Description: Conditions: 150 mM KOAc, 10 mM MgCl2 and 150 mM bicine (pH 8.5), 24 C. Structure probing data (2A3 and DMS) for a 207-nucleotide construct. Source: RMDB library OK3TST, as collected in RNAgym. For 2A3, 1,207 sequencing reads were counted.

[RMDB]
RNA sequence: GGGAACGACUCGAGUAGAGUCGAAAAUGCAGAAGCCAAAAAUAUCACAUGGUUUAAAGAUGGGAAGAUGAUCGGCUUCCUAACUGAAGAUAAAAAAAAAUGGAAUCUGGGAAGUAAUGCCAAGGACCCUCGAGGGAUGUAUCAGUGUAAAGGAUCAAGUCAUACAUAUCUUCGGAUAUGUAUGACUAAAAGAAACAACAACAACAAC
Reactivity to 2A3 in 0.01 (KOAc 150mM, MgCl2 10mM, bicine 150mM(pH8.5), 24C), signal-to-noise 2, nucleotides 027 to 156: u150g000c030a000g030a110a020g000c010c000a050a080a070a060a020u100a050u170c030a040c030a110u090g020g020u050u090u180a060a130a020g110a090u160g010g010g000a000a030g020a050u130g030a050u050c030g050g000c000u010u020c000c000u040a090a080c020u050g040a050a010g070a130u300a050a080a060a000a000a000a000a000a000u030g030g010a070a010u020c070u060g000g000g020a020a020g050u050a120a030u100g000c030c010a020a000g070g010a030c000c010c000u000c030g020a080g000g020g000a010u070g000u010a150u060c020a010g000u020g000u070a010a120a060g050g010a000u090c050a020
Reactivity to DMS in 0.01 (KOAc 150mM, MgCl2 10mM, bicine 150mM(pH8.5), 24C), signal-to-noise 1, nucleotides 027 to 156: u000g050c040a070g000a080a070g010c020c040a010a040a060a230a100u000a130u030c020a090c000a100u000g000g000u000u010u010a050a080a050g000a130u000g000g010g010a080a040g010a140u000g010a050u010c080g040g000c010u000u000c000c010u010a050a160c050u000g010a080a140g020a120u030a030a000a000a000a030a080a080a180a260u000g010g010a070a100u000c050u000g050g060g010a090a030g010u000a120a080u000g010c000c030a040a070g010g040a100c030c000c040u010c050g000a030g000g000g010a010u010g000u000a080u000c030a010g020u010g030u000a010a080a080g010g000a100u000c060a100